[RMDB]
RNA sequence: GGGAACGACUCGAGUAGAGUCGAAAAUGGGUCAUUUAGGCCAUAUUUACUGUCAUUAUUUAUAUGAUUGGAUUUACAUUUGCUACUUUCCUUUUUUUGAGAUGGAGUCUCAAUUUGUCACCCAGGCUGAAGUGCAGUGGUGCAAUCUCAGCUCACAGUAUUAGGUAUCGUUCGCGAUACCUAAUACAAAAGAAACAACAACAACAAC
Reactivity to DMS in 0.01 (KOAc 150mM, MgCl2 10mM, bicine 150mM(pH8.5), 24C), signal-to-noise 2, nucleotides 027 to 156: u010g010g050g030u000c030a200u000u010u010a170g010g030c000c030a130u010a020u010u000u000a080c050u000g010u000c000a020u000u000a160u020u010u010a100u010a030u030g000a090u000u020g020g010a210u000u000u010a120c050a100u000u000u010g010c030u000a080c060u000u000u000c010c020u000u000u010u000u000u010u000g010a050g010a050u000g000g010a170g000u000c040u000c060a040a150u000u000u010g020u000c030a060c020c030c020a100g020g030c010u000g020a020a040g020u000g020c020a090g010u000g050g010u010g000c030a030a050u010c050u000c030a050g010c010u000c060a060c090a160
Reactivity to 2A3 in 0.01 (KOAc 150mM, MgCl2 10mM, bicine 150mM(pH8.5), 24C), signal-to-noise 6, nucleotides 027 to 156: u080g050g000g020u070c070a090u130u140u260a160g030g000c000c030a010u060a030u070u070u060a060c020u030g030u040c030a010u010u200a090u080u300u140a180u100a040u080g020a040u030u100g040g020a020u050u100u100a060c030a040u060u090u100g050c040u030a060c060u050u060u090c010c000u110u090u070u050u020u110u120g050a060g000a010u070g140g100a080g050u010c000u000c020a030a070u040u060u120g080u070c030a020c030c010c020a040g060g000c010u030g020a090a020g040u040g010c030a030g060u090g150g060u050g030c010a020a040u020c040u010c050a020g000c010u020c040a050c030a050